[RMDB]
RNA sequence: GGGAACGACUCGAGUAGAGUCGAAAAGAGGCGGUGAUCGGGAUAUCGAUGGGAAUAUUCACGCCGAGGCUUAUGGGGAGAGGCAUAUCGAUCACCAGGUUGAGGCCGACCAGGCCCUGGUAAUCGCUAUGAAACGAGCUUUCGAGCUCGUUUCAUAAAAAGAAACAACAACAACAAC
Reactivity to 2A3 in 0.01 (KOAc 150mM, MgCl2 10mM, bicine 150mM(pH8.5), 24C), signal-to-noise 2, nucleotides 027 to 126: g050a050g010g050c010g020g000u100g060a110u050c010g050g110g000a010u060a060u170c030g030a040u080g080g030g060a030a090u120a060u280u120c050a060c010g000c050c020g000a040g000g000c090u230u150a070u300g010g000g000g010a070g010a030g000g000c040a070u080a000u140c030g000a010u010c000a000c000c010a000g020g030u080u200g070a080g080g000c010c010g000a090c010c130a090g010g050c000c050c000u030g000g000u000a040a010u000c020g000c070
Reactivity to DMS in 0.01 (KOAc 150mM, MgCl2 10mM, bicine 150mM(pH8.5), 24C), signal-to-noise 2, nucleotides 027 to 126: g030a130g070g050c050g010g000u020g010a120u070c080g000g000g050a080u020a090u030c040g010a160u030g030g020g000a070a140u030a070u000u010c050a070c120g000c020c000g010a100g000g000c070u000u050a070u010g000g010g000g010a030g000a110g010g010c110a040u010a050u010c020g000a020u000c060a000c000c000a010g000g030u020u030g000a140g000g000c000c000g020a120c160c230a090g000g010c020c000c030u010g000g000u000a050a020u000c010g000c260
The record gives the reactivity of an RNA of 177 nucleotides to 2A3 and DMS. It was measured as part of the RMDB library OK1LIB. The RNA was probed in 150 mM KOAc, 10 mM MgCl2 and 150 mM bicine (pH 8.5) at 24 C. For 2A3, 846 sequencing reads were counted.